[RMDB]
RNA sequence: GGGAACGACUCGAGUAGAGUCGAAAAAUGGGCGGCGCAUGAGAGAAGCCCAAACACCUAACUGCCCAAAAUGGAGAAAGUUCACGUUGACAUCGAGGAAGAUAGUCCUUUCCUCAGAGCUUUGCAACAAACCAAUGCUUUUCGAAGCAUUGGUUUGAAAAGAAACAACAACAACAAC
Reactivity to 2A3 in 0.01 (KOAc 150mM, MgCl2 10mM, bicine 150mM(pH8.5), 24C), signal-to-noise 1, nucleotides 027 to 126: a010u010g010g000g000c050g040g000c120g040c090a170u150g030a080g010a010g060a120a050g010c030c060c000a000a020a020c040a040c010c000u000a030a100c070u150g040c000c000c000a120a120a030a000u200g000g030a070g010a020a050a030g000u050u010c010a010c130g080u140u140g130a030c040a100u120c120g000a010g000g010a010a000g030a010u110a040g120u080c000c000u000u100u030c010c000u010c040a030g010a010g000c010u140u000u070g070c040a110a100
Reactivity to DMS in 0.01 (KOAc 150mM, MgCl2 10mM, bicine 150mM(pH8.5), 24C), signal-to-noise 3, nucleotides 027 to 126: a070u000g010g000g000c020g000g020c100g010c120a090u010g020a140g010a150g010a120a130g010c020c010c010a020a070a100c130a120c050c020u010a060a070c050u000g000c010c010c020a050a060a120a090u010g000g000a120g000a060a050a050g010u010u010c050a090c160g030u000u020g010a100c140a090u000c060g000a020g000g000a020a030g000a120u010a170g010u000c090c020u000u000u000c000c010u010c030a100g010a060g000c020u000u000u000g000c110a120a150